[RMDB]
Structure probing data (DMS and 2A3) for a 177-nucleotide construct.
The reactions ran in a buffer of 150 mM KOAc, 10 mM MgCl2 and 150 mM bicine (pH 8.5), at 24 C.
It was measured as part of the RMDB library OK2TST.
RNA sequence: GGGAACGACUCGAGUAGAGUCGAAAAUGUGCUUAAAUACCGUCAAGAUCCACACCCAUUGCCAUGUACGCGGACUUGUUGAUCACUCGGCCACCGUCGCGGACUUUAAUGCGCAGUGCAUCGAGAAGCUCUGAGACAUAUUCGUAUGUCUCAGAGCAAAAGAAACAACAACAACAAC
Reactivity to DMS in 0.01 (KOAc 150mM, MgCl2 10mM, bicine 150mM(pH8.5), 24C), signal-to-noise 2, nucleotides 027 to 126: u000g070u040g020c050u000u000a060a130a080u010a090c040c070g020u000c120a050a040g000a080u000c020c040a040c020a050c040c010c000a080u000u000g020c020c040a010u000g000u000a050c050g030c010g010g000a080c090u000u010g010u000u010g000a100u000c090a060c080u000c060g010g020c300c020a030c030c050g020u010c030g000c080g000g020a080c180u000u000u000a030a090u000g030c030g020c030a050g030u000g030c090a080u000c070g020a170g010a070a160
Reactivity to 2A3 in 0.01 (KOAc 150mM, MgCl2 10mM, bicine 150mM(pH8.5), 24C), signal-to-noise 2, nucleotides 027 to 126: u060g020u020g000c040u030u040a050a040a030u120a090c000c050g060u040c100a070a020g040a100u060c030c000a030c020a010c010c000c000a050u000u150g040c020c010a040u060g010u030a030c010g040c040g030g050a090c010u030u070g020u030u060g070a060u010c040a000c090u020c030g000g050c010c010a020c060c010g060u070c040g010c020g030g090a050c000u090u060u140a130a040u100g020c050g000c050a080g090u030g100c020a060u060c000g080a070g020a110a010
The DMS profile rests on 1,208 reads.